Overview:
This 177-nucleotide RNA was probed chemically with DMS and 2A3. It was measured as part of the RMDB library OK2TRN. Reactivities are rounded to 0.1 and cut off at 0 and 3. The reactions ran in a buffer of 150 mM KOAc, 10 mM MgCl2 and 150 mM bicine (pH 8.5), at 24 C. 2A3 adducts were read by reverse transcription with SuperScript II with manganese.
RNA sequence: GGGAACGACUCGAGUAGAGUCGAAAAGACGCCAUGUUGCGUAACCGGCGUAUCGUGACCGCCGACCUGAAGUCCGAUCAGGGACUCGAGCUUGCGCUCAAACUCAUCGCCAAGGCCGACGUGUUGAGAUAGCAAUUAGCUUCGGCUAAUUGCUAUCAAAAGAAACAACAACAACAAC
Reactivity to DMS in 0.01 (KOAc 150mM, MgCl2 10mM, bicine 150mM(pH8.5), 24C), signal-to-noise 4, nucleotides 027 to 126: g010a050c030g000c010c040a100u010g020u040u000g020c050g030u000a060a100c230c090g010g020c000g030u010a040u010c050g010u020g000a040c060c000g000c030c010g000a180c020c020u010g020a070a070g000u000c030c010g000a070u000c120a090g010g000g010a090c050u000c100g000a040g010c030u000u010g010c220g000c030u010c040a070a080a080c070u010c060a080u000c070g000c020c040a100a100g020g010c010c010g010a030c100g010u000g020u000u010g010a200
Reactivity to 2A3 in 0.01 (KOAc 150mM, MgCl2 10mM, bicine 150mM(pH8.5), 24C), signal-to-noise 3, nucleotides 027 to 126: g090a010c020g000c030c040a240u300g060u180u170g050c030g010u030a020a100c040c030g000g010c000g020u030a050u110c040g070u100g030a030c010c010g000c000c010g050a030c000c030u000g050a030a000g000u000c010c020g010a060u040c040a040g110g000g020a020c020u020c100g000a000g010c000u080u100g000c040g000c030u010c000a000a060a070c080u100c030a080u040c010g000c030c020a060a030g080g020c010c020g050a050c050g080u110g050u060u040g040a080